[RMDB]
Chemical mapping of a 207-nucleotide RNA with 2A3. The reactions ran in a buffer of 150 mM KOAc, 10 mM MgCl2 and 150 mM bicine (pH 8.5), at 24 C. It was measured as part of the RMDB library VIROID. For 2A3, 2,351 sequencing reads were counted.

RNA sequence: GGGAACGACUCGAGUAGAGUCGAAAACCAACUCCGGCUGGUGUGAUGACGGAGCCGUUCCACGCAGGACGCGAACAAGAAGAAGCCGAAGCAACUUCAGGUCGCCGCGCACGAACUGGCGCUCGAUCUACGCCUCGCUAGAGUAGGUUUCCCCUGGCUUCACUGACUACUUCGGUAGUCAGUGAAGAAAAGAAACAACAACAACAAC
Reactivity to 2A3 in 0.01 (KOAc 150mM, MgCl2 10mM, bicine 150mM(pH8.5), 24C), signal-to-noise 3, nucleotides 027 to 156: c000c000a000a020c000u000c000c010g030g000c010u020g020g010u020g010u010g050a130u090g040a030c180g100g010a000g000c000c000g020u010u010c050c020a080c080g000c040a110g080g110a120c070g030c020g070a060a030c060a160a190g020a030a010g020a050a000g010c050c110g110a080a020g010c000a020a050c000u000u000c000a040g100g090u060c010g000c040c010g020c010g000c010a050c170g010a010a030c060u230g020g000c030g020c040u100c020g060a100u000c020u060a010c010g020c010c000u020c100g000c010u010a010g000a000g010u030a060g010g000u000u020u050c000c010c000c010u040g110g000

As a SHAPE reagent, 2A3 marks flexible, mostly unpaired nucleotides at the ribose 2'-OH.